An RNA of 207 nucleotides, treated with 2A3 and read out base by base. 2A3 adducts were read by reverse transcription with SuperScript II with manganese.

RNA sequence: GGGAACGACUCGAGUAGAGUCGAAAAUCCUCGAGAGCUUGGCCGUCGGGCCUUAUACCCGACUUGCUGAGUUUCUCUAGGAGAGUCCCUUUCCCAGCCCUGAGGCGGCUGGUCAAUAAAAGCCUCAAAAACUACCACUGGUUCGCCAGUGGUAGAACUGUAGUAGGAAGUUCGCUUCCUACUACAGAAAAGAAACAACAACAACAAC
Reactivity to 2A3 in 0.01 (KOAc 150mM, MgCl2 10mM, bicine 150mM(pH8.5), 24C), signal-to-noise 1, nucleotides 027 to 156: u000c000c000u000c010g000a000g000a000g000c000u020u000g020g010c030c030g010u020c010g000g040g000c000c040u020u150a120u100a060c000c000c000g010a000c000u010u130g010c000u010g000a000g000u090u300u000c000u010c020u000a010g020g010a030g000a030g050u020c000c010c000u010u090u030c000c010c000a010g000c000c010c040u090g030a000g000g000c010g000g050c020u000g030g090u150c100a010a020u080a170a060a010a010g000c000c000u000c000a050a080a000a000a000c000u000a000c000c000a030c000u000g000g020u070u050c110g010c060c000a000g000u000g000g000u000a000g000a010a000